[RMDB]
RNA sequence: GGGAACGACUCGAGUAGAGUCGAAAAAGAAGUAGUAUUAAUGAAGUUAUUGACUACUAUGUCGAAGGUAAAAAUACAUGGUUAUUGUCUGUUAGUACUGUUGUAGAUAAUGAGUUAGUUACUAUAUGGAAAGAUGGUAACGUAUUGUGAUUUGGUAGCGCACAUUCUAUUUCGAUAGAAUGUGCGCAAAAGAAACAACAACAACAAC
Reactivity to 2A3 in 0.01 (KOAc 150mM, MgCl2 10mM, bicine 150mM(pH8.5), 24C), signal-to-noise 3, nucleotides 027 to 156: a000g070a070a000g040u070a000g010u000a020u100u060a090a060u110g130a080a010g100u050u100a090u100u150g020a000c000u020a010c010u010a040u110g040u020c040g040a060a020g080g040u200a060a100a000a050a000u110a040c030a010u040g020g010u050u080a060u060u160g040u030c040u030g020u050u020a030g020u030a030c000u030g050u020u040g000u020a020g010a110u070a140a110u120g030a080g080u020u100a000g000u000u000a010c010u010a010u010a070u070g030g090a050a070a020g020a020u030g000g010u000a010a000c020g010u030a020u020u130g020u020g040a070u000u070u030g040g010u050a020